[RMDB]
RNA sequence: GGGAACGACUCGAGUAGAGUCGAAAAAUCUGGAGAACAGCACAGGAAGGACCUGCCUCCAUAAUUCAAUCACCUCCCACCUGGUUCCUCCCACAACACAUGGGAAUGGUGAGUUACAAUUCAAGAUGAGAUUUGGGUGGGGACACAGCCAAACCAACGAGCUUUUAUGAUUCGUCAUAAAAGCUCGAAAAGAAACAACAACAACAAC
Reactivity to 2A3 in 0.01 (KOAc 150mM, MgCl2 10mM, bicine 150mM(pH8.5), 24C), signal-to-noise 2, nucleotides 027 to 156: a000u050c060u090g000g000a010g030a090a040c050a070g100c050a020c010a050g010g050a050a060g120g040a120c040c030u010g010c000c000u040c000c000a070u120a040a140u140u140c100a030a060u030c010a030c030c000u010c010c010c000a000c010c100u060g010g010u030u020c000c020u010c000c000c000a030c000a000a070c030a010c000a040u010g000g050g000a020a120u130g040g030u010g000a050g020u040u110a030c030a040a100u070u160c050a090a020g000a080u050g040a020g010a110u060u070u130g040g000g000u060g000g040g070g000a010c060a000c000a050g050c000c080a030a180a030c240c010a030a020
This 207-nucleotide RNA was probed chemically with 2A3. High 2A3 reactivity points to a flexible backbone, as in loops and unpaired stretches. Values are in units of 0.01, from 0 to 300, in steps of 10. The reactions ran in a buffer of 150 mM KOAc, 10 mM MgCl2 and 150 mM bicine (pH 8.5), at 24 C.